[RMDB]
RNA sequence: GGGAACGACUCGAGUAGAGUCGAAAAAUUACAAAAUCUUCGGAUUAAUUUUAGCAGUUUGCAUCGAUGUCUAAAAUUAGAAUGGAAAAUCGGUCAUAUCGAUAUUCGGUGUAUGGAAAUAAACGGAAUCGAUGAGUAAUUUCGAUUACUCAUCGAUAAAAGAAACAACAACAACAAC
Reactivity to DMS in 0.01 (KOAc 150mM, MgCl2 10mM, bicine 150mM(pH8.5), 24C), signal-to-noise 4, nucleotides 027 to 126: a100u040u040a130c090a070a060a080a060u010c030u000u020c100g020g020a110u000u000a040a010u010u010u000u000a020g000c050a040g000u030u020u010g010c070a060u010c040g010a050u010g010u020c000u000a010a020a020a030u010u020a040g010a080a110u050g010g020a070a040a070a040u020c020g020g000u010c110a070u030a090u020c030g020a050u000a070u010u020c020g010g030u010g010u000a040u030g000g010a070a070a080u010a030a070a070c100g000g000a080
Reactivity to 2A3 in 0.01 (KOAc 150mM, MgCl2 10mM, bicine 150mM(pH8.5), 24C), signal-to-noise 5, nucleotides 027 to 126: a000u080u090a030c020a010a190a000a040u000c030u050u080c120g120g000a070u040u080a040a050u020u090u010u050a000g040c050a040g030u110u120u020g020c000a020u010c000g030a010u020g090u000c010u030a000a030a000a100u120u080a070g100a130a070u120g080g080a050a040a000a050u050c020g030g040u120c070a070u040a040u160c030g010a000u010a080u110u040c010g000g000u000g000u030a080u090g100g080a120a100a030u110a060a120a040c080g020g000a090
Conditions: 150 mM KOAc, 10 mM MgCl2 and 150 mM bicine (pH 8.5), 24 C. An RNA of 177 nucleotides, treated with DMS and 2A3 and read out base by base. It was measured as part of the RMDB library OK1LIB. For 2A3, 4,684 sequencing reads were counted.